[RMDB]
Structure probing data (2A3 and DMS) for a 207-nucleotide construct. For DMS, 4,922 sequencing reads were counted.
RNA sequence: GGGAACGACUCGAGUAGAGUCGAAAAUCUGACCACAGUGAUAUGACACUAGAAAUCAAUUAUGGGAGGAAGCUAGGUGUCAUGUUAUGCACCUGUAGUCCCAGCUAAUUGGAAAGCUGAGGUGGGAGGAUUGCUUAAGUCCAGGAGUUCAAGGCUGCGGGUUAUAGAAUUUCGAUUCUAUAACCCGAAAAGAAACAACAACAACAAC
Reactivity to 2A3 in 0.01 (KOAc 150mM, MgCl2 10mM, bicine 150mM(pH8.5), 24C), signal-to-noise 2, nucleotides 027 to 156: u010c020u030g030a020c000c010a040c020a020g020u030g030a030u040a070u170g050a040c010a010c030u030a040g060a050a120a030u110c030a000a070u110u090a060u240g010g000g040a090g030g050a090a020g040c080u080a030g050g110u020g050u110c030a020u030g050u090u110a100u180g000c040a030c000c020u000g010u080a020g040u000c000c000c000a000g000c010u060a070a110u080u010g060g030a140a050a010g000c020u030g020a020g040g060u030g020g000g000a030g010g010a020u000u110g000c020u100u040a050a010g000u020c010c020a010g050g030a020g000u090u160c050a040a000g030g000c020u050g030
Reactivity to DMS in 0.01 (KOAc 150mM, MgCl2 10mM, bicine 150mM(pH8.5), 24C), signal-to-noise 3, nucleotides 027 to 156: u010c030u010g000a210c000c030a090c080a140g060u000g000a110u010a040u000g040a120c040a130c010u000a120g010a110a060a080u000c040a050a070u010u010a070u000g000g020g010a110g020g020a120a150g000c050u000a030g010g040u000g010u000c070a060u000g030u010u000a080u000g010c010a070c030c010u000g030u000a130g010u010c000c020c010a090g000c050u000a050a110u010u000g000g010a070a110a110g030c030u010g040a070g030g030u000g010g000g010a110g000g000a120u000u010g020c040u000u010a040a120g010u000c010c020a090g000g000a120g020u000u000c040a060a110g010g040c050u010g000
It was measured as part of the RMDB library OK3TST. 2A3 adducts were read by reverse transcription with SuperScript II with manganese. Conditions: 150 mM KOAc, 10 mM MgCl2 and 150 mM bicine (pH 8.5), 24 C.